[RMDB]
RNA sequence: GGGAACGACUCGAGUAGAGUCGAAAAGACUUCACUGUCAUGAUCAAAGAAUCCUGUGAUGGCAUGGGCGAUGUCAGUGAGAAGCAUGGCGGAGGACCAGCUGUCCCUGAGAAGAUUGUGCGUUAAAGGGAUUAAGUAAGUUCGCUUACUUAAUCCCAAAAGAAACAACAACAACAAC
Reactivity to 2A3 in 0.01 (KOAc 150mM, MgCl2 10mM, bicine 150mM(pH8.5), 24C), signal-to-noise 4, nucleotides 027 to 126: g030a040c060u070u060c120a030c070u080g030u060c020a020u020g090a050u090c100a110a080a140g080a060a110u070c000c010u040g040u150g070a100u200g070g000c040a070u020g030g020g060c030g010a010u030g030u040c020a000g050u000g050a050g040a090a010g080c160a210u050g030g010c050g010g080a050g020g060a080c000c010a000g010c000u020g060u030c000c000c000u110g000a080g040a150a060g020a060u050u050g020u030g040c080g080u030u040a040a090a000
Reactivity to DMS in 0.01 (KOAc 150mM, MgCl2 10mM, bicine 150mM(pH8.5), 24C), signal-to-noise 4, nucleotides 027 to 126: g030a130c050u030u010c060a060c060u000g010u010c000a040u000g000a140u020c030a070a060a150g000a140a130u030c060c000u010g020u040g000a100u020g000g030c080a050u030g000g010g010c080g020a160u030g000u020c030a030g000u020g040a090g000a080a110g020c060a070u010g010g000c040g010g010a150g010g000a050c060c030a100g000c040u010g000u010c000c000c000u000g010a100g000a080a150g020a110u010u000g000u000g000c080g020u000u010a050a070a120